This 177-nucleotide RNA was probed chemically with DMS and 2A3. The DMS profile rests on 1,884 reads. Conditions: 150 mM KOAc, 10 mM MgCl2 and 150 mM bicine (pH 8.5), 24 C. It was measured as part of the RMDB library M2PK50. For 2A3 the reverse transcriptase was SuperScript II with manganese.
RNA sequence: GGGAACGACUCGAGUAGAGUCGAAAAGCUUUCCGUUUCGACGGAAAGCAAAGGCAAGUACAUGAGAGAUCAAAGAUCACACAGAAAAGCCGUACUAAAGAAAAAUCAAUCUGUUCGCAGAUUGAAAUGAUUGAACACUAUUCGUAGUGUUCAAUCAAAAAGAAACAACAACAACAAC
Reactivity to DMS in 0.01 (KOAc 150mM, MgCl2 10mM, bicine 150mM(pH8.5), 24C), signal-to-noise 3, nucleotides 027 to 126: g010c010u000u000u000c000c000g010u000u000u010c190g010a040c030g020g000a040a020a030g020c000a030a080a080g000g020c030a070a040g010u000a110c050a120u000g030a110g010a140g000a050u000c030a130a110a150g010a030u000c010a120c060a120c070a130g000a050a140a130a240g000c020c000g000u000a130c080u010a090a090a170g000a020a060a090a120a090u000c020a020a000u000c000u000g000u000u020c180g010c000a000g000a000u000u000g040a000a050a060
Reactivity to 2A3 in 0.01 (KOAc 150mM, MgCl2 10mM, bicine 150mM(pH8.5), 24C), signal-to-noise 2, nucleotides 027 to 126: g000c000u000u020u000c000c000g010u030u020u080c200g070a010c000g000g000a000a000a000g040c000a050a010a000g000g000c020a050a010g080u060a050c070a120u110g030a080g010a010g000a130u020c070a300a180a000g030a040u010c010a020c000a010c020a040g090a070a060a010a000g020c030c030g040u050a040c020u120a060a070a060g080a050a100a030a020a020u030c000a000a010u000c010u020g010u010u070c230g000c060a010g010a010u000u000g000a010a030a040